[RMDB]
RNA sequence: GGGAACGACUCGAGUAGAGUCGAAAAGGGUAGUCCUGGCUGUAAACAAUGCUCGCUAGGUAUGUCACGCGCCAUGAGCACGUGAUGUGCCGUAGGGAAGACGAUAAGCGAGCCGCCUGGGAAGUACGAUUUUAUGUGAGUUCGCUCACAUAAAAUCAAAAGAAACAACAACAACAAC
Reactivity to 2A3 in 0.01 (KOAc 150mM, MgCl2 10mM, bicine 150mM(pH8.5), 24C), signal-to-noise 3, nucleotides 027 to 126: g120g010g020u080a070g070u020c010c030u000g000g000c000u040g050u140a060a050a050c040a100a190u140g010c000u000c010g010c010u020a030g000g010u020a010u010g010u000c000a010c010g010c000g020c020c010a250u290g060a060g070c000a000c000g000u000g000a010u020g000u000g000c000c020g000u020a010g060g040g040a020a070g110a020c050g020a080u040a170a030g010c000g000a010g020c000c020g000c010c030u040g010g000g020a040a040g050u060a020c100
Reactivity to DMS in 0.01 (KOAc 150mM, MgCl2 10mM, bicine 150mM(pH8.5), 24C), signal-to-noise 3, nucleotides 027 to 126: g010g010g010u000a070g020u010c010c000u000g010g020c020u010g020u010a070a060a170c180a100a090u020g000c000u000c010g010c000u000a080g010g020u000a000u000g010u000c000a000c000g010c040g010c000c020a170u000g000a200g030c000a010c000g000u010g010a010u000g020u000g000c000c000g020u020a040g010g000g010a140a120g010a130c050g000a120u010a040a300g000c010g020a010g000c000c120g000c030c000u010g010g000g000a050a060g000u000a090c090
The data come from the RNA Mapping Database (RMDB), library RFMREP. Structure probing data (2A3 and DMS) for a 177-nucleotide construct. DMS adducts were read by reverse transcription with MarathonRT. The DMS profile rests on 3,341 reads. The RNA was probed in 150 mM KOAc, 10 mM MgCl2 and 150 mM bicine (pH 8.5) at 24 C.